[RMDB]
RNA sequence: GGGAACGACUCGAGUAGAGUCGAAAAUCACAAAGCGGAUUUAGCUCGGUUGGGAGAGGUCCAGACCGAAGAUCUGGCAUUCCUGUGUCCGAGACACAGAAUUCGCACCAUAAACAACGGGAGAUUCAUCGACGAUACGAUUCGUCGUAUCGUCGAUAAAAGAAACAACAACAACAAC
Reactivity to DMS in 0.01 (KOAc 150mM, MgCl2 10mM, bicine 150mM(pH8.5), 24C), signal-to-noise 2, nucleotides 027 to 126: u000c060a060c220a110a070a080g040c030g000g000a000u000u020u000a090g010c020u000c010g000g010u000u090g060g000g000a060g000a040g020g000u150c010c010a010g010a030c020c050g010a070a100g000a290u000c020u000g010g010c000a100u050u010c010c000u020g050u040g000u000c020c000g000a040g020a010c110a090c300a100g010a020a000u000u000c010g040c000a120c030c060a080u090a070a100a090c280a180a120c040g000g000g000a210g000a040u050u000c150
Reactivity to 2A3 in 0.01 (KOAc 150mM, MgCl2 10mM, bicine 150mM(pH8.5), 24C), signal-to-noise 4, nucleotides 027 to 126: u140c000a000c020a120a060a030g010c010g020g010a000u000u000u050a050g010c010u000c000g000g080u110u200g010g020g000a050g010a030g110g090u130c000c000a000g000a000c010c140g170a140a020g060a090u000c000u000g010g000c020a040u060u010c000c000u070g050u030g080u080c000c000g010a010g180a070c020a000c010a060g060a020a010u000u010c020g000c000a000c000c000a050u150a030a150a040c080a030a020c020g020g070g020a110g000a070u130u150c050
The record gives the reactivity of an RNA of 177 nucleotides to DMS and 2A3. It was measured as part of the RMDB library OK1LIB. The DMS profile rests on 1,795 reads. The RNA was probed in 150 mM KOAc, 10 mM MgCl2 and 150 mM bicine (pH 8.5) at 24 C. The 2A3 profile rests on 2,322 reads.